Conditions: 150 mM KOAc, 10 mM MgCl2 and 150 mM bicine (pH 8.5), 24 C. An RNA of 177 nucleotides, treated with DMS and 2A3 and read out base by base. The 2A3 profile rests on 789 reads.
RNA sequence: GGGAACGACUCGAGUAGAGUCGAAAACUAUUGCAAUUCUGCAUGGGUAAAAGUUCUGGGUGCUAUUGGUGCUGGGCGUGAUUAUUUGGUCCAGAAUGGCUGUGGAAUCCUGAUGAUUGCGGCUGCCCCGAUUUGAUCAUUUCGAUGAUCAAAUCGGAAAAGAAACAACAACAACAAC
Reactivity to DMS in 0.01 (KOAc 150mM, MgCl2 10mM, bicine 150mM(pH8.5), 24C), signal-to-noise 1, nucleotides 027 to 126: c030u000a100u020u020g030c030a060a120u000u020c120u000g010c050a030u000g000g000g030u040a070a100a120a100g030u000u000c020u000g030g000g020u000g000c050u000a090u000u000g010g020u010g010c000u010g000g020g020c000g010u000g020a080u000u010a060u000u000u000g000g030u010c010c040a070g010a120a060u000g010g000c030u010g030u000g000g000a110a080u000c030c040u000g000a070u010g000a070u000u000g010c080g000g010c040u000g020c100c050
Reactivity to 2A3 in 0.01 (KOAc 150mM, MgCl2 10mM, bicine 150mM(pH8.5), 24C), signal-to-noise 1, nucleotides 027 to 126: c030u040a070u120u110g020c040a060a100u250u100c070u160g010c040a080u050g070g010g050u170a110a080a070a060g090u120u010c030u130g090g000g040u060g040c040u010a050u150u190g100g000u060g040c040u040g000g000g000c010g050u040g040a030u030u150a000u160u100u210g030g000u020c010c000a010g100a070a080u030g010g000c000u010g020u010g170g040a020a020u000c000c000u050g040a040u020g000a000u010u070g020c000g050g010c040u080g040c050c000